Structure probing data (DMS and 2A3) for a 170-nucleotide construct. For 2A3 the reverse transcriptase was SuperScript II with manganese. The 2A3 profile rests on 145,862 reads.
RNA sequence: GGGAACGACUCGAGUAGAGUCGAAAAGCCUUUGGCUUUUACGCAAGUUUUAUCAGCAUGUAAUCAAUGGUUGCAAAGAUACGGCAUGCUUGCUCUGCUAUAAGAGGAACCGACUUACUAGAGUUGAACGGAAGGUAGUUCGCUACCUUCAAAAGAAACAACAACAACAAC
Reactivity to DMS in 0.01 (KOAc 150mM, MgCl2 10mM, bicine 150mM(pH8.5), 24C), signal-to-noise 9, nucleotides 027 to 129: g020c020c030u000u040u050g020g030c030u000u020u030u050a070c190g030c060a060a030g030u020u030u020u040a070u020c070a100g010c120a060u040g020u030a070a050u010c050a050a180u050g060g050u060u030g020c040a030a070a130g010a030u010a040c050g000g000c040a050u010g010c020u010u030g010c010u030c040u020g010c040u010a090u040a090a030g000a040g010g040a060a090c160c020g010a020c010u000u000a000c010u000a040g010a020g010u040u000g000a020a210c040g000
Reactivity to 2A3 in 0.01 (KOAc 150mM, MgCl2 10mM, bicine 150mM(pH8.5), 24C), signal-to-noise 9, nucleotides 027 to 129: g030c000c000u030u020u110g040g000c030u060u060u150u140a080c100g000c010a020a020g000u020u050u100u120a180u120c050a040g050c060a080u090g020u080a130a060u070c080a060a120u130g160g060u130u140g140c040a090a080a030g020a020u040a040c030g040g000c050a010u050g000c000u000u010g010c010u070c070u070g000c010u050a050u040a270a060g040a010g020g020a020a020c070c000g000a000c000u000u010a000c000u000a010g000a000g000u000u020g010a030a010c030g050
The RNA was probed in 150 mM KOAc, 10 mM MgCl2 and 150 mM bicine (pH 8.5) at 24 C.
The data come from the RNA Mapping Database (RMDB), library 15KLIB.